[RMDB]
RNA sequence: GGGAACGACUCGAGUAGAGUCGAAAAUUGCUUGUGACAGUCUUGUAUAAGCCUAUUCAGCAGGGUGAUGAAAAUGAAGCUGACAUUGAAUAUGUCUAUACUGAUGAAGUGCUAACAAGCAUUUUGACUAAUUGUUCAAGUUCGCUUGAACAAUUAGAAAAGAAACAACAACAACAAC
Reactivity to 2A3 in 0.01 (KOAc 150mM, MgCl2 10mM, bicine 150mM(pH8.5), 24C), signal-to-noise 6, nucleotides 027 to 126: u080u030g000c000u010u010g000u010g020a030c030a040g020u020c020u110u130g010u020a020u010a030a010g010c000c000u020a040u000u030c010a010g000c010a030g050g070g100u110g070a100u060g080a070a090a080a110u100g030a050a010g070c010u020g030a080c030a120u080u060g020a020a010u040a010u040g000u000c000u000a020u010a030c030u020g060a070u050g030a180a040g100u070g120c020u060a070a020c010a020a000g000c000a010u060u050u020u010g010a010
Reactivity to DMS in 0.01 (KOAc 150mM, MgCl2 10mM, bicine 150mM(pH8.5), 24C), signal-to-noise 7, nucleotides 027 to 126: u010u000g020c010u010u000g020u000g010a090c050a140g000u000c010u010u000g010u000a020u000a010a090g010c010c040u000a030u000u000c010a040g010c060a040g000g010g010u000g020a120u010g000a090a080a110a090u000g000a150a240g010c020u000g010a100c100a090u010u000g010a030a020u000a010u000g010u000c030u000a020u000a020c010u000g000a060u000g000a070a080g020u000g020c060u010a110a030c040a020a020g010c000a040u000u010u000u000g010a250